Chemical mapping of a 207-nucleotide RNA with 2A3 and DMS.

RNA sequence: GGGAACGACUCGAGUAGAGUCGAAAAAUAUUCCACAAUAUUUAAAGGGACUAUUGGGAGGUAUCUUGGGAAUAGGAUUAGGAGUGUUAUUAUUGAUUUUAUGUUUACCUACAUUGGUUGAUUGUAUAAGAAAUUGUAUCCACAAGAUACUAGGAUACAGUAACACGUGUUUCGACACGUGUUACUGAAAAGAAACAACAACAACAAC
Reactivity to 2A3 in 0.01 (KOAc 150mM, MgCl2 10mM, bicine 150mM(pH8.5), 24C), signal-to-noise 1, nucleotides 027 to 156: a000u080a110u010u030c010c010a120c010a060a070u150a180u110u300u290a230a060a060g020g000g000a010c000u090a180u140u030g000g010g010a000g000g010u080a030u110c010u070u050g020g020g030a010a080u050a050g020g020a020u040u120a010g080g030a000g000u080g050u050u080a020u070u000a010u010u030g020a070u040u090u050u210a110u100g040u020u030u130a070c000c010u010a060c070a110u170u100g000g010u010u010g000a240u040u000g020u000a140u070a280a050g050a000a070a030u010u040g000u000a020u000c000c010a030c030a040a020g000a010u100a040c040u010a060g020g020a010u070a100
Reactivity to DMS in 0.01 (KOAc 150mM, MgCl2 10mM, bicine 150mM(pH8.5), 24C), signal-to-noise 1, nucleotides 027 to 156: a100u000a110u010u000c040c050a180c080a050a080u010a070u000u000u030a080a160a080g020g020g000a070c060u000a030u000u020g030g010g050a100g040g000u000a040u000c030u000u010g030g010g000a060a060u000a020g020g010a100u010u000a120g040g000a050g080u000g030u020u000a030u000u000a040u010u010g000a170u020u020u020u020a050u010g010u000u000u000a100c040c000u000a080c060a150u000u000g020g050u000u000g010a070u000u000g030u000a120u000a080a140g010a060a030a060u000u000g000u000a000u020c010c040a120c130a060a150g000a000u010a030c060u000a140g010g000a150u000a040
The RNA was probed in 150 mM KOAc, 10 mM MgCl2 and 150 mM bicine (pH 8.5) at 24 C.
The data come from the RNA Mapping Database (RMDB), library OK3TST.